[RMDB]
RNA sequence: GGGAACGACUCGAGUAGAGUCGAAAACAGUGAUGGAAACAUCACUGAAAAACGUGUCAGCGCCGCACGAAAAAGUCGAUCGAAUACCGAUCGACAAGCGCUAAAGUCAUGCCGAAAGGCAUGACAAAAUUACUGAGUGCUUCGGCACUCAGUAAUUAAAAGAAACAACAACAACAAC
Reactivity to 2A3 in 0.01 (KOAc 150mM, MgCl2 10mM, bicine 150mM(pH8.5), 24C), signal-to-noise 4, nucleotides 027 to 126: c000a000g000u000g000a000u000g000g040a050a030a020c010a010u000c010a000c010u010g000a030a000a000a000a000c010g000u000g000u000c010a040g030c000g000c020c030g050c030a010c060g290a190a010a020a000a000g010u000c000g000a000u000c000g000a020a040u140a300c100c010g000a000u000c000g000a000c000a000a000g000c000g000c010u030a080a010a010g000u000c000a000u000g000c000c010g050a100a030a010g010g000c000a000u000g000a000c000a000a000
Reactivity to DMS in 0.01 (KOAc 150mM, MgCl2 10mM, bicine 150mM(pH8.5), 24C), signal-to-noise 2, nucleotides 027 to 126: c030a010g040u000g010a000u000g000g020a190a130a190c010a000u000c000a010c000u000g010a030a050a030a050a170c000g020u000g000u020c020a050g000c000g040c030c300g010c000a010c010g000a090a080a020a020a030g000u000c000g000a020u020c000g060a300a200u010a130c110c020g000a030u000c000g000a000c000a010a050g000c000g020c010u020a120a080a070g000u000c000a000u010g030c000c010g000a080a060a190g010g000c010a000u010g000a000c000a010a000

Source: RMDB library OK1LIB, as collected in RNAgym. An RNA of 177 nucleotides, treated with 2A3 and DMS and read out base by base. Values cover nucleotides 27 to 126. The reactions ran in a buffer of 150 mM KOAc, 10 mM MgCl2 and 150 mM bicine (pH 8.5), at 24 C. For DMS the reverse transcriptase was MarathonRT. The 2A3 profile rests on 4,556 reads.